[RMDB]
RNA sequence: GGGAACGACUCGAGUAGAGUCGAAAAAUGCAAAAGUGCUUAACGAAAUGUAUGAUGAUAGUGUACUUCAGGAGAAUGAGUUAGAAGUAUACCAUCAAUCUAGUGAACGUACUGAAUUCAAAGAUGCCUUACGACACCGAUUCGUCGGUGUCGUAAGAAAAGAAACAACAACAACAAC
Reactivity to DMS in 0.01 (KOAc 150mM, MgCl2 10mM, bicine 150mM(pH8.5), 24C), signal-to-noise 2, nucleotides 027 to 126: a080u000g000c070a040a090a180a040g000u000g000c010u000u010a300a000c000g000a050a100a170u000g000u010a090u050g000a010u000g000a080u050a120g030u000g030u020a000c010u010u000c000a160g000g000a080g070a140a120u040g020a160g070u020u010a120g000a030a000g000u010a010u030a000c020c030a020u010c000a020a010u000c160u020a210g050u000g000a050a080c300g000u000a010c010u010g000a070a100u040u030c060a030a150a070g010a120u040g010c100
Reactivity to 2A3 in 0.01 (KOAc 150mM, MgCl2 10mM, bicine 150mM(pH8.5), 24C), signal-to-noise 4, nucleotides 027 to 126: a020u230g020c030a000a040a100a050g070u010g000c010u120u180a050a000c040g090a040a160a190u170g030u220a170u100g050a040u020g010a040u050a060g030u020g000u020a000c000u000u030c040a050g210g020a080g140a230a260u300g050a090g250u030u170a020g010a000a000g020u000a000u040a040c020c000a020u010c040a050a220u000c010u070a030g000u000g150a010a010c050g040u010a020c020u020g050a040a140u170u100c080a130a100a030g120a070u200g050c000